[RMDB]
RNA sequence: GGGAACGACUCGAGUAGAGUCGAAAAGCAGUAUCUCGUUAGGCGAGGCUCCUAUACAAACACAGGUUGCUGAUCUGACGACGUCGAGAGACGCCCAAGAUUAGGACAGGAUAUAUCAAACCAAGGUGAACCUGUCCAGGGUUCGCCCUGGACAGAAACAUUUCAACCGAUUCGUCGGUUGAAAUGUAAAAGAAACAACAACAACAAC
Reactivity to DMS in 0.01 (KOAc 150mM, MgCl2 10mM, bicine 150mM(pH8.5), 24C), signal-to-noise 2, nucleotides 027 to 156: g010c050a080g000u000a070u010c020u010c020g000u000u000a100g020g010c030g000a110g020g010c020u000c000c000u000a000u000a130c050a130a060a100c100a070c160a150g000g020u000u000g020c010u030g000a040u000c000u020g030a160c050g010a070c000g010u000c000g030a300g000a300g000a010c000g000c010c030c040a190a070g000a020u010u010a050g050g000a100c060a080g000g000a070u000a100u010a090u000c030a060a060a130c040c020a050a170g000g010u010g000a020a090c110c010u000g030u000c010c020a100g000g020g040u000u000c300g020c020c000c000u000g030g000a000c020a030g020a090a060
Reactivity to 2A3 in 0.01 (KOAc 150mM, MgCl2 10mM, bicine 150mM(pH8.5), 24C), signal-to-noise 3, nucleotides 027 to 156: g030c040a000g030u110a170u050c020u000c030g030u060u150a090g090g000c040g030a030g030g000c020u050c010c010u080a050u060a190c130a050a170a000c050a010c010a080g090g000u060u140g090c000u010g010a030u010c000u030g020a010c010g010a000c010g020u010c010g010a000g000a010g000a080c000g010c000c010c000a020a010g010a040u040u070a010g030g050a010c040a020g050g070a030u080a020u030a030u150c050a050a040a030c060c010a050a030g100g020u060g030a030a030c000c010u000g010u010c000c010a000g020g010g010u030u070c170g070c000c010c010u000g000g010a000c000a000g000a000a010